Structure probing data (DMS and 2A3) for a 177-nucleotide construct. It was measured as part of the RMDB library OK2TST.
[RMDB]
RNA sequence: GGGAACGACUCGAGUAGAGUCGAAAACACGCAGUUCUGGACGUAGUCCUGGAACAGAUUGAUGAUUUCCGGAUUCCGGGACAGGAAAUCGGUGCUUUUCACAAUCAGAUUCGCCCCGAACAGCAUGGGACCUAUACCAAUUCGUUGGUAUAGGUCCAAAAGAAACAACAACAACAAC
Reactivity to DMS in 0.01 (KOAc 150mM, MgCl2 10mM, bicine 150mM(pH8.5), 24C), signal-to-noise 2, nucleotides 027 to 126: c040a090c120g000c060a110g020u000u010c000u000g010g010a020c040g010u000a090g020u000c030c030u020g010g000a040a030c130a080g000a080u010u000g010a140u010g010a080u010u020u000c000c030g010g000a200u000u000c000c000g000g000g000a070c080a140g020g000a000a040a030u010c010g010g010u010g010c250u000u000u000u000c060a050c090a060a040u020c100a120g000a140u000u000c010g000c030c000c010c060g000a010a020c020a040g020c050a070u000g020
Reactivity to 2A3 in 0.01 (KOAc 150mM, MgCl2 10mM, bicine 150mM(pH8.5), 24C), signal-to-noise 2, nucleotides 027 to 126: c090a020c060g040c050a000g010u020u020c010u030g000g020a020c030g060u120a050g040u050c010c040u040g040g020a030a020c020a020g000a030u060u130g070a100u020g010a030u020u110u000c030c030g060g000a120u040u010c010c000g030g000g090a050c050a070g030g080a000a050a030u060c020g000g020u060g030c030u080u070u100u070c060a040c030a060a120u110c050a040g000a140u040u030c050g030c020c020c000c020g000a020a010c010a010g060c030a050u090g070